Structure probing data (DMS and 2A3) for a 177-nucleotide construct. DMS adducts were read by reverse transcription with MarathonRT. The DMS profile rests on 1,883 reads. Reactivities are rounded to 0.1 and cut off at 0 and 3.
RNA sequence: GGGAACGACUCGAGUAGAGUCGAAAAGAUAUGGAUCUGAACUACACCCGAAGUCAGCAUCGAUCUCGGAAACGAGGGAGCUGCCGAAGGUGCAGAUCCUAAGUCAAAAGGCAUCUUCGGAUGCCAAUCUUUCACUUGAGUUCGCUCAAGUGAAAGAAAAAGAAACAACAACAACAAC
Reactivity to DMS in 0.01 (KOAc 150mM, MgCl2 10mM, bicine 150mM(pH8.5), 24C), signal-to-noise 3, nucleotides 027 to 126: g000a060u000a300u000g000g020a010u000c000u010g010a040a030c060u020a300c020a010c000c010c000g000a160a120g000u010c010a010g020c000a300u010c200g000a060u010c010u010c010g010g010a190a110a100c000g020a020g000g010g000a030g010c000u000g010c020c000g000a200a060g010g030u000g000c000a020g010a010u000c000c000u000a060a030g000u010c010a060a060a150a140g000g020c000a000u000c010u000u000c180g040g000a010u010g010c000c000a020a030
Reactivity to 2A3 in 0.01 (KOAc 150mM, MgCl2 10mM, bicine 150mM(pH8.5), 24C), signal-to-noise 2, nucleotides 027 to 126: g020a000u070a030u100g000g010a000u020c010u010g020a110a070c040u130a040c160a000c030c030c000g020a060a030g040u150c030a000g000c010a150u300c090g070a090u070c010u000c010g050g100a150a110a070c030g010a000g000g010g020a020g010c010u010g010c000c000g040a030a000g030g000u020g000c000a000g000a010u000c000c000u020a110a040g040u020c010a030a010a120a140g000g030c020a000u000c000u080u170c300g150g000a010u020g020c030c000a000a000

The reactions ran in a buffer of 150 mM KOAc, 10 mM MgCl2 and 150 mM bicine (pH 8.5), at 24 C.